[RMDB]
RNA sequence: GGGAACGACUCGAGUAGAGUCGAAAAGAUAUGGACGAUACCCAGCAAGGUCCGGAUCGGAAACGAUCCGAAGACUGAUGACCUGGAUCGUCCUAAGUCAAAACAUGCGAACUUCGGUUCGCAUGAACUAACGCUACCUGUUCGCAGGUAGCGUUAGAAAAGAAACAACAACAACAAC
Reactivity to 2A3 in 0.01 (KOAc 150mM, MgCl2 10mM, bicine 150mM(pH8.5), 24C), signal-to-noise 2, nucleotides 027 to 126: g000a000u020a000u020g000g000a010c000g020a010u210a300c020c030c000a000g010c050a050a030g010g000u000c000c000g000g000a010u020c000g000g000a010a000a000c000g010a000u000c020c000g030a180a050g020a000c010u030g080a300u010g050a030c020c010u020g000g020a000u000c000g010u030c000c000u000a000a000g000u000c000a020a040a100a210c000a010u020g000c010g000a000a010c010u090u100c300g140g000u000u000c010g000c000a000u000g000a000a020
Reactivity to DMS in 0.01 (KOAc 150mM, MgCl2 10mM, bicine 150mM(pH8.5), 24C), signal-to-noise 2, nucleotides 027 to 126: g000a010u000a020u020g000g000a020c000g010a020u010a150c290c000c000a010g010c020a070a050g010g040u010c020c000g000g010a010u010c010g000g000a010a010a010c000g030a020u000c000c000g010a040a130g020a060c000u000g010a050u010g020a030c300c010u000g010g000a030u000c020g010u010c000c000u010a000a080g000u010c000a100a080a160a250c020a010u010g020c000g010a020a000c000u000u000c200g020g000u000u000c000g010c010a000u000g000a060a170